RNA sequence: GGGAACGACUCGAGUAGAGUCGAAAACAAUCGAUUGAGAAUGAAAUGGCCGAGACCGUCCGAACGACGCUACUGGAUGGGUUGACCGACGGCGUCAAUCCGCGUGAGAUGGCGCGGACGUUGACGGACGAGAUUGAAUCGCUGCAACGGACGCGGGCAGAUCUAAACCGUUCGCGGUUUAGAUCUGAAAAGAAACAACAACAACAAC
Reactivity to DMS in 0.01 (KOAc 150mM, MgCl2 10mM, bicine 150mM(pH8.5), 24C), signal-to-noise 1, nucleotides 027 to 156: c040a080a080u000c060g020a160u010u010g010a140g000a150a180u010g000a060a150a080u000g090g030c020c010g000a230g000a120c060c020g000u010c000c000g060a050a160c050g030a040c020g000c010u000a100c050u000g030g030a080u000g020g000g000u000u000g020a090c000c010g030a130c050g000g030c000g040u010c010a050a080u000c020c000g000c040g000u020g000a130g000a150u010g010g050c000g000c010g000g020a020c060g000u010u000g010a180c060g040g010a050c010g000a080g000a210u000u000g070a120a160u000c030g030c030u000g000c010a100a050c020g000g020a090c080g040c050g010g010g000
Reactivity to 2A3 in 0.01 (KOAc 150mM, MgCl2 10mM, bicine 150mM(pH8.5), 24C), signal-to-noise 3, nucleotides 027 to 156: c030a010a050u110c060g110a090u030u250g090a120g040a110a130u190g040a080a070a100u120g030g000c040c030g020a060g040a090c030c030g040u040c020c030g020a070a050c060g040a020c030g010c050u090a060c050u090g050g030a110u080g120g000g000u000u060g030a070c010c050g110a130c080g090g050c040g000u000c010a010a040u010c000c020g000c000g020u090g070a170g040a110u100g060g000c010g000c000g000g000a000c000g030u040u030g100a150c010g000g020a060c040g010a000g020a050u120u270g080a090a090u050c010g000c020u020g000c010a010a010c020g040g030a000c010g020c020g020g010g010